The record gives the reactivity of an RNA of 177 nucleotides to DMS and 2A3. The 2A3 profile rests on 1,716 reads. The data come from the RNA Mapping Database (RMDB), library OK2TST. Conditions: 150 mM KOAc, 10 mM MgCl2 and 150 mM bicine (pH 8.5), 24 C.
[RMDB]
RNA sequence: GGGAACGACUCGAGUAGAGUCGAAAAAGGGAUGUCUUCUAAUCUGAAUUCGGCGGCACAACCGAUUAAGGGGAACUUAGUCGAACUUCUCGAAAAGGUCAAGACAUUGAUCUAACAUCGGAUCCGAGGUACCGAUAUGAUUCGUCAUAUCGGUACCAAAAGAAACAACAACAACAAC
Reactivity to DMS in 0.01 (KOAc 150mM, MgCl2 10mM, bicine 150mM(pH8.5), 24C), signal-to-noise 2, nucleotides 027 to 126: a150g010g010g020a040u000g000u010c050u000u000c080u000a030a130u000c070u000g000a090a130u010u000c030g000g040c080g030g000c170a110c210a150a160c040c000g030a030u000u020a110a130g000g000g010g010a080a130c150u000u000a030g000u000c020g040a010a050c040u000u000c030u000c090g000a050a110a060a080g000g000u000c030a020a020g000a050c300a130u000u000g000a020u000c010u000a080a080c180a090u000c050g000g020a140u020c030c030g020a220
Reactivity to 2A3 in 0.01 (KOAc 150mM, MgCl2 10mM, bicine 150mM(pH8.5), 24C), signal-to-noise 2, nucleotides 027 to 126: a020g100g000g050a040u060g020u000c030u100u020c000u060a060a070u010c010u020g060a040a060u040u030c020g010g000c020g030g040c090a010c020a080a070c050c000g020a030u080u140a060a050g000g050g000g020a010a040c020u030u060a080g000u010c000g050a080a060c040u030u030c030u010c030g010a030a050a010a040g030g020u090c050a010a000g050a100c020a140u000u040g040a020u000c030u040a020a080c010a100u110c040g090g010a020u010c010c030g070a070